RNA sequence: GGGAACGACUCGAGUAGAGUCGAAAACGAGAGGUCUGGGUAAUCCUUUAAUACUCAUCGUGCUGGGGAUUGAUUCUUGUAAUUAUUAAUCAUGAACGAGGAAUUCCUAGUAAACGCAAGUCAUCAUCCUGUUAGAAUAGUUCGCUAUUCUAACAGGAAAAGAAACAACAACAACAAC
Reactivity to 2A3 in 0.01 (KOAc 150mM, MgCl2 10mM, bicine 150mM(pH8.5), 24C), signal-to-noise 4, nucleotides 027 to 126: c050g020a040g010a010g080g050u050c060u070g020g000g030u070a070a140u120c010c000u100u100u080a080a030u080a080c020u010c020a120u050c040g020u030g000c010u010g010g020g000g000a020u000u060g030a070u120u000c000u020u030g030u010a120a090u080u140a080u100u100a060a050u080c040a030u070g050a050a000c020g010a040g040g020a020a030u000u000c010c000u010a020g020u050a010a150a060c060g000c070a060a060g060u070c030a070u010c000a030u000
Reactivity to DMS in 0.01 (KOAc 150mM, MgCl2 10mM, bicine 150mM(pH8.5), 24C), signal-to-noise 3, nucleotides 027 to 126: c080g010a070g010a050g000g000u010c100u010g000g000g030u010a110a140u000c010c000u000u000u000a040a110u000a090c020u000c040a090u020c030g030u000g000c040u000g020g020g000g000a080u000u020g010a070u000u000c030u000u000g000u000a090a090u020u020a100u010u010a090a050u010c100a030u000g020a190a150c110g000a010g020g000a060a140u010u000c010c010u010a050g040u010a050a100a070c120g010c250a050a060g010u000c090a110u000c140a110u000
The record gives the reactivity of an RNA of 177 nucleotides to 2A3 and DMS. 2A3 is a SHAPE reagent: it acylates the 2'-hydroxyl of flexible nucleotides of all four kinds. In probing experiments dimethyl sulfate is read out at A N1 and C N3, which are open when not base-paired. The RNA was probed in 150 mM KOAc, 10 mM MgCl2 and 150 mM bicine (pH 8.5) at 24 C. Source: RMDB library RFMREP, as collected in RNAgym.